[RMDB]
RNA sequence: GGGAACGACUCGAGUAGAGUCGAAAAAUGGUGUCGGACAGUCCGAACGACACCUCCUCGUCGAGAGGAGGGAGCACAUAGGAGGCGGAGAGGGUGUGCCUCGUCCCGAGCACCGAGAGGACGAGCGUCGUCUUAAUAGUUUCGACUAUUAAGACGAAAAAGAAACAACAACAACAAC
Reactivity to DMS in 0.01 (KOAc 150mM, MgCl2 10mM, bicine 150mM(pH8.5), 24C), signal-to-noise 9, nucleotides 027 to 126: a070u010g010g010u000g010u000c020g010g000a170c120a120g010u000c070c050g010a080a170c040g000a060c040a070c000c000u000c010c000u000c020g010u010c250g000a220g000a020g010g000a030g000g000g000a090g010c060a060c100a100u000a110g000g000a110g000g010c110g000g000a090g000a090g000g000g010u000g010u000g010c100c010u000c010g000u000c010c010c020g010a130g010c080a110c080c060g000a130g010a130g000g010a030c020g000a040g010c230g010
Reactivity to 2A3 in 0.01 (KOAc 150mM, MgCl2 10mM, bicine 150mM(pH8.5), 24C), signal-to-noise 9, nucleotides 027 to 126: a000u130g020g000u030g020u020c010g010g040a070c050a080g090u040c040c060g020a050a020c030g010a010c000a030c010c000u010c000c000u020c010g120u070c150g150a100g000a010g100g010a010g000g010g000a030g040c040a040c010a090u170a060g060g030a050g050g040c130g050g030a190g030a080g120g020g010u090g020u050g040c000c000u010c000g010u000c000c010c010g010a040g020c040a060c050c040g010a050g010a030g030g000a010c010g000a010g000c040g060